[RMDB]
RNA sequence: GGGAACGACUCGAGUAGAGUCGAAAAAAACCUAAGAAUAAGCAAGUCUUCUUUCCAGGUCACCACUUGCAAGCUACAUGGAGGUUCCCCCUGGCCUCCAUGCCAGUACCGAGCCACAGCGGGGUUACACUACCUUUUAGUUCGCUAAAAGGUAGUGAAAAGAAACAACAACAACAAC
Reactivity to 2A3 in 0.01 (KOAc 150mM, MgCl2 10mM, bicine 150mM(pH8.5), 24C), signal-to-noise 4, nucleotides 027 to 126: a000a010a000c070c000u080a130a040g070a090a090u190a110a010g010c020a030a050g020u040c020u050u020c020u050u120u050c050c030a030g010g050u080c040a030c110c010a030c040u020u040g010c060a070a050g020c010u020a010c010a000u010g010g000a000g000g000u020u030c000c010c010c000c010u000g010g000c000c000u010c000c010a000u000g000c000c020a020g010u030a070c030c060g070a060g110c070c040a040c010a020g030c110g050g000g000g000u010u030a010
Reactivity to DMS in 0.01 (KOAc 150mM, MgCl2 10mM, bicine 150mM(pH8.5), 24C), signal-to-noise 6, nucleotides 027 to 126: a070a030a100c020c010u000a070a060g020a070a070u000a080a100g010c040a060a030g000u000c100u000u000c060u010u000u000c060c050a090g000g010u000c060a070c120c070a070c040u000u000g000c050a100a070g010c020u010a090c020a010u000g000g010a010g010g020u000u000c020c000c000c010c010u000g000g010c000c000u000c000c010a000u010g000c040c060a030g010u000a100c120c070g000a090g020c110c140a040c020a030g040c300g010g020g010g010u000u000a120
Source: RMDB library OK2TST, as collected in RNAgym. Structure probing data (2A3 and DMS) for a 177-nucleotide construct. 2A3 adducts were read by reverse transcription with SuperScript II with manganese. For 2A3, 6,876 sequencing reads were counted.